[RMDB]
RNA sequence: GGGAACGACUCGAGUAGAGUCGAAAACAAAAUGAUCGGGGCUCAAGUUCGCCACCGAGACCUAACGGCACGGGUAACACCGUGAUCCAGUAGGUUGGCAUUCUGUUCGGGUGGAAGCUCGGGUGAGGAUGAUAUAGCUCUUCGGAGCUAUAUCAUCAAAAGAAACAACAACAACAAC
Reactivity to 2A3 in 0.01 (KOAc 150mM, MgCl2 10mM, bicine 150mM(pH8.5), 24C), signal-to-noise 2, nucleotides 027 to 126: c010a000a050a020a120u190g040a040u100c040g020g000g080g010c020u020c060a080a060g050u180u150c080g040c020c000a060c020c010g000a020g000a000c000c000u010a040a060c030g020g000c010a000c000g000g030g010u000a000a020c020a030c020c020g020u010g000a010u130c010c010a050g040u010a010g010g000u000u040g030g020c010a050u120u000c070u140g060u050u020c010g070g000g000u050g020g030a080a000g000c010u000c080g000g020g030u060g090a100g180
Reactivity to DMS in 0.01 (KOAc 150mM, MgCl2 10mM, bicine 150mM(pH8.5), 24C), signal-to-noise 2, nucleotides 027 to 126: c120a110a110a070a050u010g000a170u000c080g010g000g000g020c010u000c140a070a090g000u000u000c190g010c010c000a130c030c000g000a070g000a040c000c000u000a090a070c040g000g000c000a000c010g000g000g000u000a100a170c170a120c000c000g030u000g000a100u010c030c000a090g020u000a040g000g000u000u030g010g000c060a040u000u000c130u000g000u000u000c070g000g000g020u000g020g010a140a090g000c030u000c030g000g000g000u000g000a170g010

Description: This 177-nucleotide RNA was probed chemically with 2A3 and DMS. It was measured as part of the RMDB library RFMREP. For 2A3, 1,589 sequencing reads were counted. The reactions ran in a buffer of 150 mM KOAc, 10 mM MgCl2 and 150 mM bicine (pH 8.5), at 24 C. For DMS, 1,112 sequencing reads were counted.